Overview: Chemical mapping of a 207-nucleotide RNA with 2A3 and DMS. The RNA was probed in 150 mM KOAc, 10 mM MgCl2 and 150 mM bicine (pH 8.5) at 24 C. For 2A3 the reverse transcriptase was SuperScript II with manganese.

RNA sequence: GGGAACGACUCGAGUAGAGUCGAAAACUCGCGACCCCAUCGAGGCGUGGGGAGCGACAUGAAUCAGCCUCGAUUAGAUGUGGUCGACCGUACGGCGGCGUACAGCGACCUAGUUAGAAGCCGCAAAACCGGAAGAGAUGACGCUCGACGGACGUCAGGUAUUUAGCCUAUUCGUAGGCUAAAUACCAAAAGAAACAACAACAACAAC
Reactivity to 2A3 in 0.01 (KOAc 150mM, MgCl2 10mM, bicine 150mM(pH8.5), 24C), signal-to-noise 4, nucleotides 027 to 156: c020u010c020g010c010g060a300c000c010c000c000a010u030c040g020a010g000g020c020g000u020g000g010g010g000a010g010c000g070a060c030a110u260g120a140a100u130c050a040g000c000c000u000c010g020a060u080u190a090g140a190u110g100u110g060g010u000c020g010a130c010c020g010u020a020c010g010g040c010g000g010c010g000u040a000c010a000g020c010g030a090c010c000u010a000g010u010u030a080g030a140a020g020c010c000g000c000a030a020a030a100c060c010g040g020a120a020g020a010g010a060u130g030a030c040g000c050u010c020g070a020c040g040g040a010c020g030u020c030a010
Reactivity to DMS in 0.01 (KOAc 150mM, MgCl2 10mM, bicine 150mM(pH8.5), 24C), signal-to-noise 2, nucleotides 027 to 156: c040u000c030g010c040g020a190c000c000c010c070a010u000c020g020a040g090g080c080g000u010g020g020g000g010a300g030c000g010a140c130a120u030g030a120a190u000c060a060g050c000c010u000c000g000a120u030u000a190g010a110u000g000u000g030g030u000c000g000a080c050c020g010u010a070c010g000g000c090g050g000c050g040u000a060c030a150g010c010g020a070c030c000u010a080g000u000u000a070g040a210a050g000c030c040g010c030a060a080a070a090c110c000g010g020a170a120g010a160g020a130u000g000a030c030g050c020u000c000g020a080c020g010g000a020c000g010u000c000a070